[RMDB]
RNA sequence: GGGAACGACUCGAGUAGAGUCGAAAAGAAUGCCACAACACGGUGAGUGCAUCGUCGGUCAGAGUCAUGCCGGCGACUGCGGCGUGCGCCGCCUGCCGAUGGAGGUCCGCGGGAAUGUUGCGGGCGACGAUCCGCCUAAGUUCGCUUAGGCGGAUCGAAAAGAAACAACAACAACAAC
Reactivity to DMS in 0.01 (KOAc 150mM, MgCl2 10mM, bicine 150mM(pH8.5), 24C), signal-to-noise 2, nucleotides 027 to 126: g000a090a110u000g030c000c020a140c070a050a070c030a170c080g000g040u000g010a150g010u010g020c020a090u000c000g020u010c050g070g010u010c100a030g010a300g020u040c140a110u000g000c030c070g000g020c070g010a020c240u000g000c010g040g010c100g020u000g000c070g020c030c030g000c070c040u000g020c000c070g000a030u000g010g020a100g000g020u000c010c070g020c020g000g020g000a220a060u030g000u020u000g020c010g020g020g070c050g020a090
Reactivity to 2A3 in 0.01 (KOAc 150mM, MgCl2 10mM, bicine 150mM(pH8.5), 24C), signal-to-noise 1, nucleotides 027 to 126: g090a110a050u120g070c000c020a020c020a040a020c070a010c070g080g020u080g160a170g000u040g000c010a030u060c030g000u000c000g000g070u070c120a030g070a050g300u100c060a080u110g030c020c040g060g020c040g030a050c070u060g000c060g100g030c240g000u200g140c120g030c000c000g070c020c020u030g010c010c000g070a080u100g040g080a040g200g000u040c010c000g000c010g000g010g070a130a180u160g040u090u070g060c130g000g010g010c000g050a040
Chemical mapping of a 177-nucleotide RNA with DMS and 2A3. For 2A3 the reverse transcriptase was SuperScript II with manganese. Source: RMDB library OK2TRN, as collected in RNAgym. The 2A3 profile rests on 801 reads. For DMS, 1,107 sequencing reads were counted. For DMS the reverse transcriptase was MarathonRT.